[RMDB]
The record gives the reactivity of an RNA of 207 nucleotides to DMS and 2A3.
RNA sequence: GGGAACGACUCGAGUAGAGUCGAAAACUUGCUGUUCGCAGCAAGAAAAAGCGUACUACUUAACGAAGAACAUAAGAUCACAACAGCGAUCCCAAAUAGGAUCGACAUGUGAUCUAUGGGAGUUAAGUAUCGCAAAAAACAGAUCUUCGGAUCUGAAGGCAGAUUAAAUGUUCGCAUUUAAUCUGCCAAAAGAAACAACAACAACAAC
Reactivity to DMS in 0.01 (KOAc 150mM, MgCl2 10mM, bicine 150mM(pH8.5), 24C), signal-to-noise 1, nucleotides 027 to 156: c020u010u000g020c000u000g060u000u000c250g060c090a060g000c000a050a040g040a030a030a100a080a110g000c040g060u000a130c140u000a040c000u000u000a000a030c050g000a100a170g020a080a140c020a030u000a020a060g000a020u020c010a020c010a040a100c040a220g030c020g000a010u000c000c000c040a100a200a240u000a040g000g040a010u010c000g040a030c130a300u010g020u000g020a000u000c010u000a040u020g000g050g000a160g000u000u000a020a030g020u000a040u000c000g150c000a000a000a050a080a060a130c010a000g010a020u000c040u000u010c280g060g010a040u000c020u000g000a050a150
Reactivity to 2A3 in 0.01 (KOAc 150mM, MgCl2 10mM, bicine 150mM(pH8.5), 24C), signal-to-noise 4, nucleotides 027 to 156: c000u030u000g000c010u030g060u150u120c260g020c130a020g000c040a010a000g070a100a040a010a020a010g030c040g040u070a080c040u000a000c000u040u000a010a000c010g190a280a070g030a130a000c000a000u070a110a170g000a000u010c000a000c000a070a100c030a110g010c010g000a000u000c010c020c030a200a300a160u250a110g000g000a000u000c000g100a070c010a060u090g000u000g000a000u000c000u000a000u000g000g000g000a060g000u000u000a000a000g010u010a040u090c020g000c000a070a090a010a000a000a000c000a000g020a020u010c000u050u080c190g110g000a000u000c000u010g040a020a040
Description: Conditions: 150 mM KOAc, 10 mM MgCl2 and 150 mM bicine (pH 8.5), 24 C. For 2A3, 2,814 sequencing reads were counted. For 2A3 the reverse transcriptase was SuperScript II with manganese. It was measured as part of the RMDB library RNAMAK. For DMS, 1,996 sequencing reads were counted.